An RNA of 177 nucleotides, treated with 2A3 and DMS and read out base by base. For DMS, 2,242 sequencing reads were counted. Values cover nucleotides 27 to 126. The reactions ran in a buffer of 150 mM KOAc, 10 mM MgCl2 and 150 mM bicine (pH 8.5), at 24 C.
RNA sequence: GGGAACGACUCGAGUAGAGUCGAAAAGAUAUGGAUAUACUAGCUAGCGAUCUACUCGGAAACGAGUAGUCGCUUGGACCUAGAUAUCCUAAGUCAAAAGAGCGGUAUACGUUCGCGUAUACCGCUCCCACUCGCUAAAGUUCGCUUUAGCGAGUGGAAAAGAAACAACAACAACAAC
Reactivity to 2A3 in 0.01 (KOAc 150mM, MgCl2 10mM, bicine 150mM(pH8.5), 24C), signal-to-noise 2, nucleotides 027 to 126: g020a030u070a090u140g000g000a010u020a010u060a300c020u000a000g040c030u030a000g000c000g040a070u080c010u020a000c020u020c000g010g000a120a100a010c010g000a000g010u000a010g000u000c000g000c010u030u060g010g040a020c000c020u000a010g000a020u010a000u010c000c000u030a130a030g070u040c030a070a050a100a100g010a010g020c000g000g000u010a000u020a030c030g050u050u150c300g020c000g100u000a000u000a010c010c000g010c000u000c020
Reactivity to DMS in 0.01 (KOAc 150mM, MgCl2 10mM, bicine 150mM(pH8.5), 24C), signal-to-noise 2, nucleotides 027 to 126: g000a030u010a300u010g000g010a020u000a000u000a140c010u010a010g000c030u000a020g020c000g020a020u030c010u000a010c010u000c010g000g000a080a080a180c010g010a020g000u000a010g030u000c000g000c000u000u010g010g000a060c300c010u000a020g000a030u000a000u000c000c000u000a050a070g010u010c030a070a090a130a140g000a010g000c010g010g000u000a000u010a000c010g000u000u010c290g030c040g040u010a000u000a000c000c000g010c010u000c000